The data come from the RNA Mapping Database (RMDB), library OK2TST. This 177-nucleotide RNA was probed chemically with DMS and 2A3. For 2A3 the reverse transcriptase was SuperScript II with manganese. The 2A3 profile rests on 4,032 reads. DMS adducts were read by reverse transcription with MarathonRT.
[RMDB]
RNA sequence: GGGAACGACUCGAGUAGAGUCGAAAACGCCGCGUCGCCCUGCGCGCGCGGCAGCAAUUCGCUUGCAUACGCCUGCGCGGCGUUCUUCGCGGCCUCGCUGUCCUGACGCGCUUUCGCGAUGUCGUCAGUGAGUAUAGGGGUUCGCCCCUAUACUCACAAAAGAAACAACAACAACAAC
Reactivity to DMS in 0.01 (KOAc 150mM, MgCl2 10mM, bicine 150mM(pH8.5), 24C), signal-to-noise 3, nucleotides 027 to 126: c180g020c060c020g020c020g020u000c050g000c180c110c120u000g010c050g020c020g010c090g020c170g010g030c020a000g010c050a070a090u000u000c170g020c080u010u010g040c070a120u010a140c060g010c000c000u000g020c120g010c080g010g020c040g020u010u000c030u010u000c090g010c010g020g000c040c070u000c060g000c050u000g010u010c020c020u020g020a070c010g000c020g000c030u010u000u010c160g000c020g000a050u000g000u000c020g000u000c070a120
Reactivity to 2A3 in 0.01 (KOAc 150mM, MgCl2 10mM, bicine 150mM(pH8.5), 24C), signal-to-noise 4, nucleotides 027 to 126: c020g000c000c010g000c020g030u050c050g030c030c030c060u090g030c050g000c000g030c010g010c010g110g000c000a000g000c010a000a100u160u130c120g070c150u050u130g000c000a080u060a200c060g000c000c010u170g050c110g030c110g110g000c020g020u040u030c020u030u040c060g010c000g000g020c010c010u040c070g050c010u050g040u060c010c020u060g060a180c000g040c000g000c000u090u160u230c110g000c020g070a070u070g080u090c020g040u060c010a060
Conditions: 150 mM KOAc, 10 mM MgCl2 and 150 mM bicine (pH 8.5), 24 C.